Record summary
Conditions: 150 mM KOAc, 10 mM MgCl2 and 150 mM bicine (pH 8.5), 24 C. Structure probing data (DMS) for a 177-nucleotide construct. For DMS the reverse transcriptase was MarathonRT. Values cover nucleotides 27 to 126.

[RMDB]
RNA sequence: GGGAACGACUCGAGUAGAGUCGAAAAGAUAUGGACCAAAAUUAAUGAGUAUGCCCAAGACAUGCUUGGGAUUCGGAAACGAAUUUAAGCAACAGCUUGGCAUACUCAUUAAUUUUGGUCCUAAGUCCUAACCACCGUAGUUCGCUACGGUGGUUAGAAAAGAAACAACAACAACAAC
Reactivity to DMS in 0.01 (KOAc 150mM, MgCl2 10mM, bicine 150mM(pH8.5), 24C), signal-to-noise 2, nucleotides 027 to 126: g000a180u010a300u020g020g000a030c000c000a020a020a010a000u010u000a020a000u000g020a040g000u000a000u000g010c280c050c050a020a010g000a070c120a280u000g000c020u010u010g030g150g020a000u000u010c000g000g010a160a080a300c000g000a010a000u000u000u010a010a020g030c000a040a050c260a170g010c000u000u000g010g040c000a020u000a020c000u000c000a000u000u000a000a000u000u000u010u000g000g020u000c000c000u000a000a100g000u000c020